[RMDB]
RNA sequence: GGGAACGACUCGAGUAGAGUCGAAAAGUUUUGAAGAUACGUGUGACAUAAAAGUAGUCACCCCAUUGUUAGGUAGGCACGGUUUGCUAAUUAGACCUUCGGAUCUAGAUCUUGUAAAAGGGAAAAACGAUGUAGGGUUUUUCGAAACCCUACAUCGAAAAGAAACAACAACAACAAC
Reactivity to DMS in 0.01 (KOAc 150mM, MgCl2 10mM, bicine 150mM(pH8.5), 24C), signal-to-noise 3, nucleotides 027 to 126: g010u000u000u010u020g010a110a120g010a110u000a080c100g010u020g020u010g010a020c030a190u010a110a060a150a130g000u000a090g020u000c020a060c020c020c030c050a100u030u000g020u000u010a020g000g030u000a060g010g010c080a020c150g010g010u010u010u000g040c080u010a020a080u010u000a040g000a060c040c020u000u010c120g010g000a020u000c020u000a050g010a060u010c030u000u000g030u020a050a070a150a080g000g000g000a030a060a030a130a130
Reactivity to 2A3 in 0.01 (KOAc 150mM, MgCl2 10mM, bicine 150mM(pH8.5), 24C), signal-to-noise 1, nucleotides 027 to 126: g020u000u020u040u160g100a130a050g030a080u070a050c060g020u040g020u000g010a010c030a040u290a130a250a040a000g000u060a100g010u010c040a010c000c010c000c010a050u060u080g100u080u150a080g010g050u030a010g010g000c050a010c080g060g140u080u030u120g060c060u070a080a050u100u070a020g010a040c020c040u070u020c060g000g010a050u000c010u010a090g000a120u040c000u070u040g020u070a110a100a070a100g060g000g010a080a030a000a080a080